RNA sequence: GGGAACGACUCGAGUAGAGUCGAAAACACCAUCCGCAUCUCGGUUUCGGUAAUCAGAAUUUUCUUUUCCAUGAUAUCCAGCUUGUAUUGCAGAUAACUGUAUUUUUCCUUAUAGGACGGCAUUUCCUAAGUUUUAUUUAAUAAUCCUGUCGAGAACGACAUACCUGCCAUUCGUGGCAGGUAUGUCAAAAGAAACAACAACAACAAC
Reactivity to 2A3 in 0.01 (KOAc 150mM, MgCl2 10mM, bicine 150mM(pH8.5), 24C), signal-to-noise 2, nucleotides 027 to 156: c030a000c000c020a040u000c000c030g040c030a080u030c040u010c100g130g000u030u100u080c050g000g020u060a050a010u100c060a050g100a110a100u090u070u060u150c100u010u060u100u020c070c020a020u040g030a020u030a020u040c000c040a010g030c100u140u010g060u140a090u020u130g030c010a020g060a110u120a180a120c010u030g040u040a150u080u100u000u060u030c000c000u040u070a060u080a130g000g030a020c020g030g040c000a000u000u090u000c000c010u000a000a060g000u020u070u240u050a080u030u090u010a180a170u070a040a060u120c010c050u020g070u040c020g100a010g120a220a050c060